[RMDB]
RNA sequence: GGGAACGACUCGAGUAGAGUCGAAAACCACUCCGCAUUCAUUGAGUGUGGAAGUUGUGGUAAUGAUUCCUGGCUUACAGGGAAUGCUAUCCAAGGGUUUGCCUGUGGAUGUGGGGCAUCAUAUACAUCUACGUAUGUGGUUCGCCACAUACGUAGAAAAAGAAACAACAACAACAAC
Reactivity to DMS in 0.01 (KOAc 150mM, MgCl2 10mM, bicine 150mM(pH8.5), 24C), signal-to-noise 3, nucleotides 027 to 126: c000c000a180c050u000c000c000g030c000a010u000u000c000a250u010u010g010a020g030u010g010u010g000g010a040a110g020u010u010g020u010g020g000u000a050a070u010g020a080u000u000c000c000u010g010g020c120u000u020a040c060a060g000g000g010a030a030u000g010c040u000a080u010c120c150a070a140g020g000g010u000u000u010g000c020c000u000g020u010g010g010a000u000g010u000g000g000g000g000c070a030u000c050a050u010a070u000a030c110a180
Reactivity to 2A3 in 0.01 (KOAc 150mM, MgCl2 10mM, bicine 150mM(pH8.5), 24C), signal-to-noise 1, nucleotides 027 to 126: c010c000a040c020u040c010c000g000c000a000u010u000c020a080u050u300g020a010g010u030g000u000g000g030a050a050g020u130u160g020u050g020g000u000a070a050u100g060a010u050u000c000c000u020g100g000c050u110u100a020c030a030g000g000g040a030a000u090g110c040u100a050u140c080c030a030a080g140g080g020u000u080u110g230c000c000u020g030u040g070g040a050u100g020u040g000g050g020g000c010a020u040c010a010u170a020u020a040c030a050
The record gives the reactivity of an RNA of 177 nucleotides to DMS and 2A3. Values cover nucleotides 27 to 126. For DMS, 2,977 sequencing reads were counted.